[RMDB]
RNA sequence: GGGAACGACUCGAGUAGAGUCGAAAAUGCAAAUGUUGUCAGACACUUUAGACAAAUUGUCUGAUUACUGUACGUUUGUUUGUUGGGCUCAUGGCUUUGAAUUAACGUCUGCAUCAUACUUUUGCAAAAACAUCGUCCUUCGGGACGAUGAAAAGAAACAACAACAACAAC
Reactivity to 2A3 in 0.01 (KOAc 150mM, MgCl2 10mM, bicine 150mM(pH8.5), 24C), signal-to-noise 4, nucleotides 027 to 129: u050g000c000a000a000a100u130g000u090u070g010u000c000a000g000a030c010a000c000u130u200u120a100g100a140c090a040a100a040u110u030g020u000c030u020g000a000u010u010a070c060u020g030u140a000c030g000u000u020u120g110u020u050u150g150u080u180g020g000g000c070u080c110a190u180g030g030c050u180u040u220g040a050a050u090u070a020a000c000g040u000c020u040g020c040a040u040c010a000u170a160c030u010u030u030u040g000c000a000a080a000a000a070